[RMDB]
RNA sequence: GGGAACGACUCGAGUAGAGUCGAAAACCGUAGAAUUCUACACCGUAGAAUCAUCUUGCCAAAUUUAUAGGAGCUGUUCAGCCCUUGGAUUCAGUUUUCCUAGUGAUAAUGGCUUUCUGGCUUUUCACUAAUUUUUGGGUUUCGACCCAAAAAUUAGAAAAGAAACAACAACAACAAC
Reactivity to DMS in 0.01 (KOAc 150mM, MgCl2 10mM, bicine 150mM(pH8.5), 24C), signal-to-noise 2, nucleotides 027 to 126: c000c030g000u040a020g030a110a030u000u000c020u010a010c000a160c300c270g030u000a000g000a020a000u000c050a080u020c140u040u020g000c000c040a050a080a090u000u040u000a080u030a000g000g000a000g000c020u000g000u010u000c060a080g010c060c040c080u010u010g030g000a040u060u000c020a000g030u000u000u030u000c020c010u000a010g030u020g000a070u010a100a160u030g010g000c010u020u010u020c060u000g010g040c010u000u010u010u000c100a040
Reactivity to 2A3 in 0.01 (KOAc 150mM, MgCl2 10mM, bicine 150mM(pH8.5), 24C), signal-to-noise 4, nucleotides 027 to 126: c000c000g000u060a050g030a070a050u000u000c010u020a040c230a250c200c300g020u010a000g010a010a010u030c020a120u020c100u060u120g000c010c010a030a170a180u070u130u070a110u080a030g000g020a010g020c000u000g020u050u070c020a050g030c030c020c030u040u100g090g000a030u110u020c000a020g050u040u070u160u020c000c010u020a020g010u070g100a020u040a160a170u060g040g000c000u030u100u020c080u050g090g010c000u020u000u030u060c040a020